[RMDB]
RNA sequence: GGGAACGACUCGAGUAGAGUCGAAAAAGCAUACCAGCUCGUACGCGAGCUGGUAUGCAAAAAUUGGUGUAGCCUUACCGUAGUAGGCACAAAAACGUCAGCUGGAACUACGGAUCCAGCUGACGAAAAAAGUGUUUUGUGUUCGCACAAAACACAAGUGAUGUUAUUAGUUCGCUAAUAACAUCACAAAAGAAACAACAACAACAAC
Reactivity to DMS in 0.01 (KOAc 150mM, MgCl2 10mM, bicine 150mM(pH8.5), 24C), signal-to-noise 1, nucleotides 027 to 156: a130g000c020a020u000a020c000c010a020g000c000u010c000g020u000a110c300g050c010g000a020g040c000u000g000g000u010a000u000g010c020a000a010a020a090a160u000u000g000g010u000g000u000a070g010c000c010u010u000a050c040c040g010u000a060g010u010a040g010g000c000a090c110a040a030a070a120a100c020g030u020c000a000g000c000u000g010g000a060a040c060u000a270c220g070g000a090u000c000c000a020g050c010u000g000a000c010g020a000a010a060a080a070a040g000u000g010u050u010u000u000g020u000g010u000u010c250g030c030a010c000a000a010a010a000c010a000c000a010a070
Reactivity to 2A3 in 0.01 (KOAc 150mM, MgCl2 10mM, bicine 150mM(pH8.5), 24C), signal-to-noise 3, nucleotides 027 to 156: a000g000c000a000u000a010c020c000a030g000c010u000c000g050u050a070c280g000c010g140a000g030c010u010g000g000u010a010u000g000c000a010a000a000a000a000u060u170g000g010u070g100u180a010g000c000c000u000u000a020c040c050g020u010a000g010u000a010g010g010c010a010c020a040a050a010a010a000c000g000u000c000a000g000c010u000g000g000a030a050c020u070a040c210g100g010a010u000c000c000a000g000c000u000g000a000c000g020a000a000a000a000a000a000g000u010g000u000u000u000u000g000u000g030u020u030c100g040c080a000c000a000a000a010a000c000a000c000a010a030